RNA sequence: GGGAACGACUCGAGUAGAGUCGAAAACUCAAGGUUCGCCUUGAGAAAAAAGAUAUGGACCAUGAACUACGAAUAUGCUAUGAAGGCUCUCGGAAACGAGAGCUGGAGUAAAUAUUCGCAUGGUCCUAAGUCAAAAACGUACGCUUCGGCGUACGAAUCUCGUUACAAGGUUCGCCUUGUAACGAGAAAAAGAAACAACAACAACAAC
Reactivity to 2A3 in 0.01 (KOAc 150mM, MgCl2 10mM, bicine 150mM(pH8.5), 24C), signal-to-noise 2, nucleotides 027 to 156: c000u000c000a000a000g030g020u030u140c230g090c030c020u010u010g000a020g060a110a110a000a000a000a000g040a020u070a010u060g010g000a000c020c020a010u020g010a060a120c180u130a060c290g000a010a000u020a010u080g180c150u050a000u060g040a020a000g010g000c000u000c000u000c000g060g010a080a090a070c010g020a000g010a010g020c010u000g000g000a000g000u000a030a050a020u030a020u010u000c010g020c010a000u000g010g000u000c000c000u000a000a000g010u010c020a010a010a000a040a070c050g000u060a020c010g000c030u050u060c280g150g010c000g010u000a010c000g010a000a040
Reactivity to DMS in 0.01 (KOAc 150mM, MgCl2 10mM, bicine 150mM(pH8.5), 24C), signal-to-noise 1, nucleotides 027 to 156: c000u000c000a000a040g000g030u000u000c200g050c000c000u010u000g000a070g020a000a010a120a150a140a300g000a060u000a300u050g000g030a010c020c000a130u000g030a150a290c030u020a110c010g040a020a000u000a000u000g010c150u000a000u000g000a300a300g000g000c000u000c000u000c000g010g050a190a110a180c000g080a090g010a020g050c000u000g020g000a300g030u000a000a040a040u000a000u000u000c020g050c000a050u000g030g050u000c020c000u000a000a190g000u020c030a070a070a020a130a230c000g000u000a020c050g020c000u000u010c300g020g000c000g000u020a000c000g000a030a090